[RMDB]
RNA sequence: GGGAACGACUCGAGUAGAGUCGAAAACGGGCUAGCACACACCUUAUGGGUGUGUAGUGUUUGUGCUAAGGGAAAUCAUAACCUUAGGUAUGUUGUAUAAACAUAACGGCAAACUAGUUAUAGCUAAAACUAGCAAUAGAUUCGUCUAUUGCUAGUUAAAAGAAACAACAACAACAAC
Reactivity to 2A3 in 0.01 (KOAc 150mM, MgCl2 10mM, bicine 150mM(pH8.5), 24C), signal-to-noise 9, nucleotides 027 to 126: c030g040g030g000c010u020a020g020c010a000c000a000c000a010c010c000u200u270a270u300g080g000g000u000g000u000g000u000a020g000u010g010u000u000u010g030u030g040c000u000a000a000g060g010g030a030a090a070u220c050a040u050a110a090c000c000u000u000a010g030g020u030a030u020g010u010u000g070u050a130u210a190a040a000c010a000u030a080a040c030g080g000c010a010a010a010c010u030a040g080u150u100a110u030a070g010c020u040a130a050
Reactivity to DMS in 0.01 (KOAc 150mM, MgCl2 10mM, bicine 150mM(pH8.5), 24C), signal-to-noise 9, nucleotides 027 to 126: c100g010g010g010c010u000a020g010c090a060c000a010c000a010c000c000u000u050a140u060g010g000g010u000g010u000g010u000a040g020u010g010u000u000u000g010u000g010c010u000a010a010g000g010g000a080a150a150u040c300a070u010a080a210c000c000u000u000a010g000g040u000a010u000g010u000u000g000u030a110u030a080a010a010c010a010u000a030a120c250g010g000c010a010a010a010c010u000a120g010u010u010a090u000a020g010c020u010a060a090